[RMDB]
RNA sequence: GGGAACGACUCGAGUAGAGUCGAAAAAAACAGACAAAUCACCUCCAGAGGACCCCUUCAGCGAACAGAAGAGUCUCUCACGCGGUAGGAGCAAGCCCAUAGCGAUAGGGGGAGAUGCUGGGAGUUAAAAGGGCUAAGUUCGCUUAGCCCAAAAGAAACAACAACAACAAC
Reactivity to 2A3 in 0.01 (KOAc 150mM, MgCl2 10mM, bicine 150mM(pH8.5), 24C), signal-to-noise 3, nucleotides 027 to 129: a000a000a000c060a020g120a000c020a010a080a010u050c040a040c010c000u060c030c000a000g000a000g070g030a070c000c020c000c000u040u090c030a030g010c010g110a030a020c020a060g050a040a000g010a010g030u010c030u030c000u000c050a050c060g030c010g040g030u050a020g070g010a030g050c030a030a020g040c000c000c000a050u070a010g010c030g050a060u140a120g000g000g000g000g020a030g000a020u100g030c010u060g000g010g010a060g000u030u060a060a030a030a050
Reactivity to DMS in 0.01 (KOAc 150mM, MgCl2 10mM, bicine 150mM(pH8.5), 24C), signal-to-noise 3, nucleotides 027 to 129: a000a030a080c030a040g040a050c120a080a030a040u000c080a070c020c020u020c030c010a160g070a000g020g020a140c060c010c020c040u000u000c090a030g050c000g050a060a000c030a080g020a030a020g000a170g000u030c020u050c030u000c040a140c040g030c000g000g120u030a000g050g010a020g010c130a020a020g040c020c010c000a020u020a070g020c040g020a110u030a000g000g030g000g080g000a040g020a060u040g040c050u040g010g000g060a040g000u040u050a000a030a080a080
Structure probing data (2A3 and DMS) for a 170-nucleotide construct. The reactions ran in a buffer of 150 mM KOAc, 10 mM MgCl2 and 150 mM bicine (pH 8.5), at 24 C. For DMS the reverse transcriptase was MarathonRT. Source: RMDB library 15KLIB, as collected in RNAgym. For DMS, 10,591 sequencing reads were counted.